[RMDB]
RNA sequence: GGGAACGACUCGAGUAGAGUCGAAAACGAGUACGAGAUGACUAGGCUAGGUACGCUAGGCUACACGAUCUGAGUACGUACUCUCUAGCGAUCAGAGGAUCUAGCGUACGCUAGAUCUCUAGACUAGCUACUAGGCCACGUUCGCGUGGCCUAGUAGAAAAGAAACAACAACAACAAC
Reactivity to 2A3 in 0.01 (KOAc 150mM, MgCl2 10mM, bicine 150mM(pH8.5), 24C), signal-to-noise 2, nucleotides 027 to 126: c030g020a020g040u070a010c090g000a020g030a170u110g030a090c030u040a020g030g080c000u020a020g000g090u140a050c050g000c040u000a020g070g000c010u080a040c100a040c080g070a060u000c020u070g030a010g190u160a090c040g010u000a040c030u000c000u000c030u070a040g040c000g050a070u090c020a060g020a030g060g120a110u020c000u020a010g000c070g090u100a070c100g000c000u010a000g000a010u020c010u000c000u020a010g000a020c010u040a040g000
Reactivity to DMS in 0.01 (KOAc 150mM, MgCl2 10mM, bicine 150mM(pH8.5), 24C), signal-to-noise 2, nucleotides 027 to 126: c140g000a080g010u000a010c090g020a140g010a070u000g010a190c150u000a020g000g010c020u000a050g000g010u010a030c170g000c000u000a020g010g000c060u000a030c110a160c160g020a050u000c040u000g000a130g050u010a240c120g030u000a060c030u020c010u000c040u000a030g020c060g000a100u000c070a010g030a100g030g010a030u000c010u010a000g010c010g020u000a050c150g020c020u000a000g000a040u000c020u000c000u000a000g000a070c000u030a080g000
The data come from the RNA Mapping Database (RMDB), library OK2TRN. An RNA of 177 nucleotides, treated with 2A3 and DMS and read out base by base. For 2A3 the reverse transcriptase was SuperScript II with manganese. For DMS, 1,894 sequencing reads were counted. For DMS the reverse transcriptase was MarathonRT.